[RMDB]
RNA sequence: GGGAACGACUCGAGUAGAGUCGAAAAGAUAUGGAUCCCAUCACAGAGCAACAGCUCGGAAACGAGACAUGCUCGUGAGGGAUCCUAAGUCAAAAGUCACAUUCGAAGUUCGCUUCGAAUGUGACAACCUGUAUCGUACGUUCGCGUACGAUACAGGAAAAGAAACAACAACAACAAC
Reactivity to DMS in 0.01 (KOAc 150mM, MgCl2 10mM, bicine 150mM(pH8.5), 24C), signal-to-noise 3, nucleotides 027 to 126: g000a040u000a300u030g000g000a000u010c010c000c000a100u000c000a000c000a150g020a010g000c000a020a090c270a180g020c010u010c000g000g000a090a090a210c000g000a010g000a030c070a260u000g000c000u000c000g000u000g000a040g020g000g010a010u000c000c000u000a020a070g000u000c020a050a050a120a100g000u000c000a010c000a010u010u010c000g010a040a010g000u010u010c300g000c000u000u000c000g010a010a000u000g010u000g000a000c000a020a060
Reactivity to 2A3 in 0.01 (KOAc 150mM, MgCl2 10mM, bicine 150mM(pH8.5), 24C), signal-to-noise 2, nucleotides 027 to 126: g030a020u050a070u150g000g000a000u000c000c010c010a030u040c000a010c030a140g010a000g010c010a020a150c070a210g050c020u000c000g000g030a060a080a010c010g000a000g040a020c030a050u060g010c000u000c010g010u020g000a000g030g010g000a000u000c000c000u000a070a010g050u010c030a040a000a020a160g000u000c000a000c000a000u000u000c000g010a000a010g020u070u140c230g120c230u010u000c010g000a000a010u000g010u000g000a000c000a000a000
Description: An RNA of 177 nucleotides, treated with DMS and 2A3 and read out base by base. The DMS profile rests on 2,299 reads. Reactivities are given for positions 27 through 126. Source: RMDB library TTRDEL, as collected in RNAgym. For 2A3, 6,757 sequencing reads were counted. Conditions: 150 mM KOAc, 10 mM MgCl2 and 150 mM bicine (pH 8.5), 24 C.